[RMDB]
RNA sequence: GGGAACGACUCGAGUAGAGUCGAAAAAGGGACGAGUAUACUGCGCAGCAGUUCGUUCUGUUCUACUUUACGGCUGCGAAACAUGGCCAUUAAGAGUAGAAGAUACUCGUAGGUUACUAGUAUUUGACUCCAUUUACGCUUUCGAGCGUAAAUGGAGAAAAGAAACAACAACAACAAC
Reactivity to DMS in 0.01 (KOAc 150mM, MgCl2 10mM, bicine 150mM(pH8.5), 24C), signal-to-noise 2, nucleotides 027 to 126: a020g000g020g000a010c000g020a030g030u010a120u000a090c000u040g000c010g000c260a140g010c040a020g000u010u000c040g010u010u000c000u010g010u020u030c000u000a000c000u000u000u020a220c200g000g000c000u000g010c120g020a120a180a170c260a140u040g030g000c000c000a060u000u050a080a070g000a030g030u000a000g000a060a010g000a050u010a000c000u000c030g010u000a140g000g040u000u020a040c100u000a110g000u020a050u050u000u030g000a300
Reactivity to 2A3 in 0.01 (KOAc 150mM, MgCl2 10mM, bicine 150mM(pH8.5), 24C), signal-to-noise 2, nucleotides 027 to 126: a050g020g000g000a000c010g020a000g050u060a050u050a140c010u020g000c190g030c060a120g010c000a000g020u090u110c010g020u020u000c020u000g020u000u000c010u010a070c000u060u050u040a090c030g000g050c050u020g060c050g050a000a040a000c130a120u250g030g010c000c000a050u010u150a100a010g000a010g070u010a000g000a010a000g020a020u100a010c000u020c000g030u030a030g010g130u030u090a020c050u080a030g040u050a270u000u060u140g130a070
The record gives the reactivity of an RNA of 177 nucleotides to DMS and 2A3. The reactions ran in a buffer of 150 mM KOAc, 10 mM MgCl2 and 150 mM bicine (pH 8.5), at 24 C.